The record gives the reactivity of an RNA of 177 nucleotides to 2A3. For 2A3, 355 sequencing reads were counted. The RNA was probed in 150 mM KOAc, 10 mM MgCl2 and 150 mM bicine (pH 8.5) at 24 C. It was measured as part of the RMDB library OK1LIB.

RNA sequence: GGGAACGACUCGAGUAGAGUCGAAAACGCCACCUGAGGUGCCACGUGCUGCAUCACUCGGGUGGUACUACGGAAUUCCUAAGGUUCUCCGACCACGUCAGGCAUCUCUGGCAUACAUUUUACAAUAGCCCCUGCAUACCUUCGGGUAUGCAGGGGCAAAAGAAACAACAACAACAAC
Reactivity to 2A3 in 0.01 (KOAc 150mM, MgCl2 10mM, bicine 150mM(pH8.5), 24C), signal-to-noise 1, nucleotides 027 to 126: c020g000c000c000a000c000c000u000g000a000g010g000u000g030c040c020a180c080g210u080g030c090u110g000c040a000u000c040a050c150u000c010g000g000g000u000g000g000u000a000c040u200a000c010g000g020a000a110u000u120c000c040u070a090a050g070g050u100u000c050u000c000c040g060a140c000c130a090c020g100u100c000a110g030g000c070a300u000c010u000c000u000g040g000c000a040u060a000c140a020u090u210u130u030a090c110a130a170u000a000